[RMDB]
RNA sequence: GGGAACGACUCGAGUAGAGUCGAAAAGGGCUCCAGCAUCUCGGUGAGCAGGCCCAGCGCGGCCGCCCCGCCGGAGUCGGUGCCCACCGUCUCUGCCACCAGCAGCUCGGCCAGCAGCGGGUCGGCCGCACCAAAUGCAGUUCGCUGCAUUUGGUGCAAAAGAAACAACAACAACAAC
Reactivity to DMS in 0.01 (KOAc 150mM, MgCl2 10mM, bicine 150mM(pH8.5), 24C), signal-to-noise 3, nucleotides 027 to 126: g000g000g020c000u020c070c030a090g020c070a040u010c060u030c110g010g000u010g020a100g000c050a100g020g010c040c000c000a140g020c180g020c070g020g000c000c000g000c080c040c040c020g050c010c010g000g030a060g000u010c020g000g000u020g020c020c010c060a300c030c030g000u000c030u000c010u020g000c040c040a160c140c100a110g020c040a030g020c040u000c060g020g000c050c080a100g000c110a100g030c020g000g000g010u010c010g010g000c000c060
Reactivity to 2A3 in 0.01 (KOAc 150mM, MgCl2 10mM, bicine 150mM(pH8.5), 24C), signal-to-noise 7, nucleotides 027 to 126: g020g010g000c020u050c070c030a040g050c070a270u040c070u050c090g140g030u140g030a050g030c120a110g030g010c000c000c010a070g120c100g010c080g030g000c000c000g000c000c010c010c000g000c020c010g010g000a020g000u020c020g000g010u060g040c010c010c000a010c000c010g020u000c010u010c000u020g030c010c020a100c030c010a070g050c010a030g010c050u090c070g060g020c040c020a040g010c010a010g000c030g000g000g010u010c000g000g000c010c000